[RMDB]
The data come from the RNA Mapping Database (RMDB), library TTRDES. This 177-nucleotide RNA was probed chemically with DMS and 2A3. DMS adducts were read by reverse transcription with MarathonRT. For 2A3 the reverse transcriptase was SuperScript II with manganese. Conditions: 150 mM KOAc, 10 mM MgCl2 and 150 mM bicine (pH 8.5), 24 C. For DMS, 14,153 sequencing reads were counted.

RNA sequence: GGGAACGACUCGAGUAGAGUCGAAAAGAUAUGGACGUUAUGCACUAGCAACAGCUGAGUCGGAAACGACUCAGACAUGCUAAACAUACUGCGUCCUAAGUCAAACAGGACGCUUCGGCGUCCUGAACGUUCUUAAUACGUUCGCGUAUUAAGAACGAAAAGAAACAACAACAACAAC
Reactivity to DMS in 0.01 (KOAc 150mM, MgCl2 10mM, bicine 150mM(pH8.5), 24C), signal-to-noise 9, nucleotides 027 to 126: g010a060u000a300u010g000g010a020c010g030u000u000a000u000g010c090a130c300u000a030g010c020a050a120c290a150g000c010u000g000a010g020u000c000g010g000a120a080a240c010g000a010c000u000c010a000g010a020c110a130u000g020c010u010a030a130a190c000a020u000a020c300u000g010c010g010u010c000c010u000a050a150g010u000c070a110a140a240c020a000g010g000a030c010g020c000u000u010c190g030g000c000g010u000c000c000u000g000a040a110
Reactivity to 2A3 in 0.01 (KOAc 150mM, MgCl2 10mM, bicine 150mM(pH8.5), 24C), signal-to-noise 8, nucleotides 027 to 126: g040a040u100a060u210g020g000a010c010g010u060u040a020u040g060c110a080c280u040a010g000c020a010a200c050a170g050c010u000g000a000g000u000c000g010g000a070a080a050c010g000a000c000u000c000a010g020a030c010a030u060g000c000u040a060a100a010c000a000u050a050c090u130g020c010g000u010c000c000u010a100a010g080u040c040a060a050a140c010a020g010g000a000c000g020c010u060u120c300g160g000c000g000u000c000c000u000g010a010a010